Structure probing data (DMS and 2A3) for a 177-nucleotide construct. 2A3 adducts were read by reverse transcription with SuperScript II with manganese. For DMS the reverse transcriptase was MarathonRT. High 2A3 reactivity points to a flexible backbone, as in loops and unpaired stretches. The DMS profile rests on 6,615 reads. The RNA was probed in 150 mM KOAc, 10 mM MgCl2 and 150 mM bicine (pH 8.5) at 24 C.

[RMDB]
RNA sequence: GGGAACGACUCGAGUAGAGUCGAAAAUCAACCAAUCUUUCCAUUCAUCGAUUUCAUAGUAGCCAAGGCGUGUUUUAACACUUACCGGAAGCCCACCUGCUUUAGUUGCUUGAAUAAUUUCGGCAGCCUUGGGUGACUAAUUCGUUAGUCACCCAAGAAAAGAAACAACAACAACAAC
Reactivity to DMS in 0.01 (KOAc 150mM, MgCl2 10mM, bicine 150mM(pH8.5), 24C), signal-to-noise 4, nucleotides 027 to 126: u070c110a110a180c070c040a110a120u030c030u030u020u000c020c040a070u000u020c060a060u020c050g000a130u010u010u030c050a060u020a090g030u010a100g000c000c010a050a150g010g010c090g000u010g000u010u000u000u000a060a100c090a020c030u020u010a090c020c000g010g000a050a110g000c010c020c030a050c080c040u000g000c050u010u040u030a060g000u000u000g000c070u000u000g010a010a060u030a060a200u010u000u000c020g000g010c120a030g030c080
Reactivity to 2A3 in 0.01 (KOAc 150mM, MgCl2 10mM, bicine 150mM(pH8.5), 24C), signal-to-noise 8, nucleotides 027 to 126: u100c030a030a060c030c010a050a050u040c040u030u070u020c030c010a070u030u080c030a050u060c050g170a150u050u060u090c090a070u080a110g060u080a010g040c010c040a050a010g050g010c050g030u030g060u010u140u050u130a130a030c020a020c030u060u150a080c010c010g030g000a020a020g020c000c020c000a060c010c010u080g030c040u080u110u100a030g000u020u040g000c010u030u180g030a030a040u200a170a110u090u060u070c000g000g000c010a020g010c000